[RMDB]
RNA sequence: GGGAACGACUCGAGUAGAGUCGAAAAAAUACUGAAGGAAGCUGCUUUACCAAUACUGAAGGAGAUCUUUCCUUUGCCGGUAAUUCUCAUUCUCUAGCAUUUACCGAUAUCUCCCUCACAGGACCGGGCCUAAAAACUUAUUCGUAAGUUUUUAGGCAAAAGAAACAACAACAACAAC
Reactivity to DMS in 0.01 (KOAc 150mM, MgCl2 10mM, bicine 150mM(pH8.5), 24C), signal-to-noise 5, nucleotides 027 to 126: a050a040u000a040c040u010g000a060a020g000g000a030a050g000c020u000g010c040u000u000u000a040c040c020a120a080u010a110c300u000g010a030a020g000g000a020g000a150u000c060u010u000u000c010c010u000u010u000g030c140c060g000g000u000a020a030u000u000c020u000c040a130u000u000c080u010c040u000a080g010c070a050u000u000u000a060c030c020g000a070u010a070u000c070u010c010c020c010u000c100a060c120a110g010g000a060c100c060g010g000
Reactivity to 2A3 in 0.01 (KOAc 150mM, MgCl2 10mM, bicine 150mM(pH8.5), 24C), signal-to-noise 2, nucleotides 027 to 126: a000a000u100a040c030u050g020a000a020g030g000a030a000g000c020u140g030c000u050u010u070a060c030c040a120a080u100a190c060u070g010a050a000g000g020a030g000a020u040c030u070u070u060c000c010u070u000u070g160c100c010g030g000u020a020a030u050u030c040u020c020a060u170u040c030u000c040u070a040g050c060a100u020u100u050a040c010c010g030a020u020a120u100c030u000c010c020c000u020c040a090c010a010g050g000a010c030c000g010g060
An RNA of 177 nucleotides, treated with DMS and 2A3 and read out base by base. For DMS, 4,674 sequencing reads were counted. The data come from the RNA Mapping Database (RMDB), library OK2TRN. The 2A3 profile rests on 2,109 reads. Conditions: 150 mM KOAc, 10 mM MgCl2 and 150 mM bicine (pH 8.5), 24 C. In probing experiments dimethyl sulfate is read out at A N1 and C N3, which are open when not base-paired.